The record gives the reactivity of an RNA of 207 nucleotides to DMS.

[RMDB]
RNA sequence: GGGAACGACUCGAGUAGAGUCGAAAAACGGUCAUAUACGUAUGACCGAAUGAGCAUAACAGGGCCACCCCCAAGCGUUCACAUUGUGGCCCCUGUCAGAUUCUGGUAAAUCUGCGAGUUCUGCUAAAUUAGGUAACUCUCUUCGGAGAGUUACCAACUGAAUUACAAACUUCGGUUUGUAAUUCAGAAAAGAAACAACAACAACAAC
Reactivity to DMS in 0.01 (KOAc 150mM, MgCl2 10mM, bicine 150mM(pH8.5), 24C), signal-to-noise 1, nucleotides 027 to 156: a070c010g010g000u000c000a000u000a050u000a100c200g050u000a000u000g020a010c000c000g040a020a010u020g010a100g030c070a100u010a050a090c070a070g020g030g010c010c010a040c000c030c010c010c010a100a210g020c030g000u000u000c050a050c050a170u000u020g000u040g000g000c040c000c000c030u000g000u000c030a030g000a020u010u000c020u000g000g000u010a090a030a030u000c010u030g000c040g000a180g020u000u010c100u000g000c010u000a080a100a110u000u010a130g010g010u000a000a010c000u000c000u000c000u010u020c300g060g010a040g020a050g020u000u010a000c000c000a030a040
Values cover nucleotides 27 to 156. Reactivities are rounded to 0.1 and cut off at 0 and 3.